[RMDB]
RNA sequence: GGGAACGACUCGAGUAGAGUCGAAAAAGAAAAUAAGCAUGAACAAAAACAGCUAAAGAAGUUGAAAUACCAAGGAAAAACCAUGGUUCGGACAAAAGUACAUGCACCGAGACCGAAAGGGAAAAAAGUAAACAAUUAGAUUCGUCUAAUUGUUUACAAAAGAAACAACAACAACAAC
Reactivity to 2A3 in 0.01 (KOAc 150mM, MgCl2 10mM, bicine 150mM(pH8.5), 24C), signal-to-noise 1, nucleotides 027 to 126: a000g020a020a080a000a040u180a100a020g000c020a010u040g050a070a030c050a060a090a060a020a030c020a020g040c050u100a210a090a000g170a090a020g060u030u020g030a040a100a000u110a060c040c030a000a030g000g060a140a080a120a020a000c000c000a000u030g070g000u100u050c020g000g070a000c060a020a100a000a000g000u000a030c000a030u000g020c000a000c010c040g020a030g040a000c020c020g030a040a000a050g020g020g000a050a070a050a000a000a050
Reactivity to DMS in 0.01 (KOAc 150mM, MgCl2 10mM, bicine 150mM(pH8.5), 24C), signal-to-noise 2, nucleotides 027 to 126: a140g010a100a020a040a120u000a040a060g020c000a020u020g000a140a050c010a060a110a110a120a110c030a040g000c010u000a040a090a090g020a100a030g030u010u020g000a120a040a110u010a070c020c030a040a040g010g010a110a120a010a040a100c020c020a040u000g000g000u000u010c110g030g020a140c090a030a090a010a020g000u010a050c020a050u000g000c030a090c020c050g010a090g030a140c010c010g010a040a070a100g000g000g010a010a020a060a030a010a050
This 177-nucleotide RNA was probed chemically with 2A3 and DMS. For DMS, 1,265 sequencing reads were counted. Reactivities are rounded to 0.1 and cut off at 0 and 3. It was measured as part of the RMDB library M2PK90. Conditions: 150 mM KOAc, 10 mM MgCl2 and 150 mM bicine (pH 8.5), 24 C. For DMS the reverse transcriptase was MarathonRT.